[RMDB]
RNA sequence: GGGAACGACUCGAGUAGAGUCGAAAAUAAACCUGAAGGGAACGCCCUUAUCGAGGAGAAGGCCUUCAAGCUCCCUCAGCUCGGUCUCGCUCGCGGGGUAGACGAAGGUGUACCUCCCGGCGCGCUAAAUAUAGGCAGUAUUCGUACUGCCUAUAUUAAAAGAAACAACAACAACAAC
Reactivity to DMS in 0.01 (KOAc 150mM, MgCl2 10mM, bicine 150mM(pH8.5), 24C), signal-to-noise 9, nucleotides 027 to 126: u010a080a100a140c040c020u000g010a070a060g000g010g000a110a090c130g010c030c010c030u000u010a090u010c110g010a080g010g010a090g010a090a080g000g000c010c010u000u000c040a070a150g010c030u000c020c020c010u000c080a100g010c040u000c090g010g010u000c090u000c060g000c060u000c090g030c210g020g000g010g020u000a020g000a070c090g010a080a040g010g010u000g000u010a080c050c020u000c010c040c050g010g010c090g000c140g010c090u010a040
Reactivity to 2A3 in 0.01 (KOAc 150mM, MgCl2 10mM, bicine 150mM(pH8.5), 24C), signal-to-noise 5, nucleotides 027 to 126: u060a010a030a020c010c020u030g090a050a040g010g020g010a090a040c030g060c010c000c000u020u050a210u140c080g030a100g020g030a070g020a100a050g110g080c010c000u030u020c030a050a040g040c010u020c020c010c000u020c030a030g000c020u030c040g110g060u060c080u040c100g040c010u050c030g010c040g020g010g000g000u030a020g010a010c030g020a050a020g050g010u030g040u050a050c000c010u030c010c010c000g010g040c010g000c020g000c030u070a070